This 207-nucleotide RNA was probed chemically with 2A3. The RNA was probed in 150 mM KOAc, 10 mM MgCl2 and 150 mM bicine (pH 8.5) at 24 C. Reactivities are given for positions 27 through 156.

[RMDB]
RNA sequence: GGGAACGACUCGAGUAGAGUCGAAAACAUUAUGAGGCAUAUUCUGCGACUCGUGUGGCGACGUUAACGCUCAGUUAAAUAUAACUGCAAAAAAUACUAAUUCUUACGCUGUAGCAGCCUAAACACCUGCUCGCGUGACUUCUAGCAGAUUGCUUAUAGUUAAUGGUCUCUUCGGAGACCAUUAACUAAAAGAAACAACAACAACAAC
Reactivity to 2A3 in 0.01 (KOAc 150mM, MgCl2 10mM, bicine 150mM(pH8.5), 24C), signal-to-noise 2, nucleotides 027 to 156: c010a000u160u100a110u300g070a120g030g030c010a060u070a060u230u040c000u020g000c010g050a040c030u040c070g000u010g020u000g030g040c050g020a000c260g100u070u030a000a000c010g010c000u010c010a000g010u020u020a100a260a030u300a260u060a110a050c010u000g030c040a030a030a120a000a060a060u180a090c060u130a090a110u140u050c050u140u060a000c010g000c010u060g000u050a000g030c010a000g000c000c000u050a020a020a000c030a000c000c000u000g000c000u000c000g000c000g000u000g000a000c030u160u020c030u060a030g000c000a000g000a030u000u120g000c000u060u020a050u040